[RMDB]
RNA sequence: GGGAACGACUCGAGUAGAGUCGAAAAAAAUGGGGAGAGUAUUGCACCUGCUUCCUAGGGCUGUGAGACAUCAAGUGCGCUCAUGCCAGGCAGUGCAUGGCUGUAUGCACUGAGUGUCCCCUGCACGGAGUCAGGUCAUAUUCGUAUGACCUGACUCAAAAGAAACAACAACAACAAC
Reactivity to 2A3 in 0.01 (KOAc 150mM, MgCl2 10mM, bicine 150mM(pH8.5), 24C), signal-to-noise 2, nucleotides 027 to 126: a000a000a030u180g010g000g020g000a080g000a030g060u120a090u150u210g070c030a060c020c010u060g080c020u060u020c010c000u040a040g000g040g000c060u040g060u040g050a010g000a020c000a060u080c080a120a040g030u020g010c030g020c020u020c020a010u110g040c000c000a030g060g110c040a010g090u020g080c010a020u010g050g070c120u040g060u160a040u110g000c010a000c000u010g010a020g020u050g040u000c010c000c030c020u030g000c050a040c050g050
Reactivity to DMS in 0.01 (KOAc 150mM, MgCl2 10mM, bicine 150mM(pH8.5), 24C), signal-to-noise 4, nucleotides 027 to 126: a040a030a070u010g000g020g000g010a050g000a090g000u000a070u000u010g020c180a100c140c010u000g010c050u000u000c010c010u000a100g010g000g010c040u010g020u000g010a020g000a030c040a060u000c170a080a050g020u000g010c020g020c080u000c020a020u000g020c010c010a090g000g000c010a110g000u000g010c010a040u000g010g020c100u010g010u000a080u000g010c000a010c000u000g000a140g010u000g010u000c000c000c000c180u000g010c000a050c170g010